[RMDB]
RNA sequence: GGGAACGACUCGAGUAGAGUCGAAAAGCAACAUAGAUCGUUCUAUUAACGAACACGCGCGGAUCGUCGGUGGUCGGCGAGCCCACGGACGUACUUGAUCGCGCGAACGAGUAAAAAUGGCCGGCAACACUAACAAUGUGUUCGCACAUUGUUAGUGAAAAGAAACAACAACAACAAC
Reactivity to 2A3 in 0.01 (KOAc 150mM, MgCl2 10mM, bicine 150mM(pH8.5), 24C), signal-to-noise 7, nucleotides 027 to 126: g050c010a000a070c020a090u150a050g110a130u060c020g030u040u000c060u060a170u150u170a110a040c080g020a030a010c050a020c060g010c010g000c010g010g050a080u060c010g020u010c060g160g000u010g000g000u020c020g010g070c100g040a020g020c000c010c000a010c030g080g000a000c010g020u090a050c040u090u190g050a120u200c010g000c000g000c000g010a000a010c020g010a020g050u110a010a090a040a040a070u060g050g000c010c010g030g030c020a070a020
Reactivity to DMS in 0.01 (KOAc 150mM, MgCl2 10mM, bicine 150mM(pH8.5), 24C), signal-to-noise 6, nucleotides 027 to 126: g010c040a080a070c070a100u000a100g010a090u010c040g010u000u000c050u000a190u010u010a060a080c090g010a050a070c150a180c040g010c000g020c010g000g010a060u000c010g010u010c010g000g040u000g010g010u000c040g010g020c150g010a120g000c180c000c010a020c020g000g010a030c010g020u010a070c170u000u010g000a100u010c010g000c010g020c030g000a010a030c090g000a120g010u000a010a050a050a050a060u000g000g010c150c020g000g010c080a070a140